RNA sequence: GGGAACGACUCGAGUAGAGUCGAAAAGUUGACGGUCAAGUUUUGUGUCUGCACGGCGGCCUGUCCCCCGACGUGAAGUUCAUCGAUCAGAUGAGACUAAUCAUGAGAGUCCAGGAGAUUCCUCAUGCGUAGGGGUAUGGUUCGCCAUACCCCUACGAAAAGAAACAACAACAACAAC
Reactivity to 2A3 in 0.01 (KOAc 150mM, MgCl2 10mM, bicine 150mM(pH8.5), 24C), signal-to-noise 1, nucleotides 027 to 126: g080u140u130g020a030c020g000g040u060c080a060a050g000u060u120u150u010g110u030g030u000c010u030g000c040a010c030g000g010c030g020g040c010c050u050g020u000c000c020c000c010c000g080a020c050g150u100g120a050a050g010u020u000c000a040u000c020g180a180u200c100a110g020a020u030g030a020g000a050c010u110a160a050u100c000a040u000g010a000g020a000g020u000c070c070a160g000g200a190g070a060u020u000c010c000u050c010a000u010g070
Reactivity to DMS in 0.01 (KOAc 150mM, MgCl2 10mM, bicine 150mM(pH8.5), 24C), signal-to-noise 3, nucleotides 027 to 126: g010u010u010g000a080c120g010g000u010c080a070a170g000u000u000u000u000g010u010g000u010c050u000g010c040a050c040g010g000c050g020g010c050c040u000g010u010c050c020c050c060c000g010a100c100g020u000g000a060a040g010u000u010c010a010u010c030g010a180u020c240a140g000a040u000g010a080g000a050c040u000a090a080u010c020a010u000g010a050g030a040g010u000c010c020a170g000g020a230g010a070u010u000c100c010u000c030a020u000g020